[RMDB]
RNA sequence: GGGAACGACUCGAGUAGAGUCGAAAAGGCCGCGGGCCGGCUGCUCUUCUUUCUCUUUCGUCGUCAUCCUUGGCUAACCGCUCAAGUUCCUCCUCUUCCUCUCGGCUGAGGUGCUUCCCUCCCGCGGGCGCACUUGACUUCGGUCAAGUGAAAAGAAACAACAACAACAAC
Reactivity to 2A3 in 0.01 (KOAc 150mM, MgCl2 10mM, bicine 150mM(pH8.5), 24C), signal-to-noise 9, nucleotides 027 to 129: g050g010c020c010g020c030g020g050g020c050c020g020g010c020u050g010c010u010c000u080u020c010u020u130u010c040u000c000u030u070u050c050g040u010c010g030u010c030a100u060c050c000u030u040g030g000c030u040a080a080c040c020g030c030u060c100a080a040g020u040u020c000c000u020c000c000u030c030u050u030c010c000u020c000u020c000g030g000c020u030g030a030g040g030u030g020c010u050u030c000c000c000u020c000c000c000g010c000g020g020g010c030g000
Reactivity to DMS in 0.01 (KOAc 150mM, MgCl2 10mM, bicine 150mM(pH8.5), 24C), signal-to-noise 9, nucleotides 027 to 129: g000g020c060c030g040c050g010g000g060c120c040g020g000c070u000g000c050u010c030u000u030c040u020u020u010c040u020c050u010u030u020c070g020u010c050g000u000c070a070u020c030c010u000u000g020g030c040u020a090a140c070c050g010c070u020c080a090a090g010u030u000c020c020u020c020c030u020c030u020u020c030c020u020c040u020c050g020g020c060u000g020a100g020g000u020g020c050u000u000c010c000c010u010c020c030c020g020c100g000g000g060c250g000
Record summary
Conditions: 150 mM KOAc, 10 mM MgCl2 and 150 mM bicine (pH 8.5), 24 C. This 170-nucleotide RNA was probed chemically with 2A3 and DMS. The DMS profile rests on 161,813 reads. 2A3 adducts were read by reverse transcription with SuperScript II with manganese.